RNA sequence: GGGAACGACUCGAGUAGAGUCGAAAAUGGGCGGACCGGCGGGAUGGGCUCCAGUCACCGGCUCGGUGGGCGACCGUCCCUUCCCAUGAGUCCACACGGUAAGCGCCUCUGGCCCGAGGCCGCUCGUUCACAAUUAACCCUUCGGGGUUAAUUGUGAAAAAGAAACAACAACAACAAC
Reactivity to 2A3 in 0.01 (KOAc 150mM, MgCl2 10mM, bicine 150mM(pH8.5), 24C), signal-to-noise 4, nucleotides 027 to 126: u060g010g010g000c030g000g020a060c010c010g050g030c030g000g010g000a020u040g000g000g000c030u040c060c020a040g110u120c030a020c050c020g140g010c130u080c100g070g020u050g010g020g030c030g050a050c000c020g060u100c010c010c030u020u020c020c000c010a020u130g020a020g010u020c010c000a010c020a020c040g060g040u120a100a020g020c000g000c020c000u000c030u060g070g000c010c000c020g000a000g000g010c050c010g000c000u030c020g050u020
Reactivity to DMS in 0.01 (KOAc 150mM, MgCl2 10mM, bicine 150mM(pH8.5), 24C), signal-to-noise 1, nucleotides 027 to 126: u010g000g000g000c020g000g000a300c050c050g040g010c060g020g000g010a100u000g000g000g000c010u020c010c010a170g000u010c090a020c000c000g000g000c210u050c150g010g020u000g000g010g000c070g020a070c020c090g000u010c000c000c080u000u040c000c000c000a100u010g040a190g010u000c020c010a120c110a050c140g000g020u070a110a110g070c030g000c010c000u000c040u000g000g000c000c040c010g000a060g000g010c000c000g020c010u000c030g000u050

About this RNA
The record gives the reactivity of an RNA of 177 nucleotides to 2A3 and DMS. Conditions: 150 mM KOAc, 10 mM MgCl2 and 150 mM bicine (pH 8.5), 24 C. The data come from the RNA Mapping Database (RMDB), library RFM100. For 2A3, 4,128 sequencing reads were counted.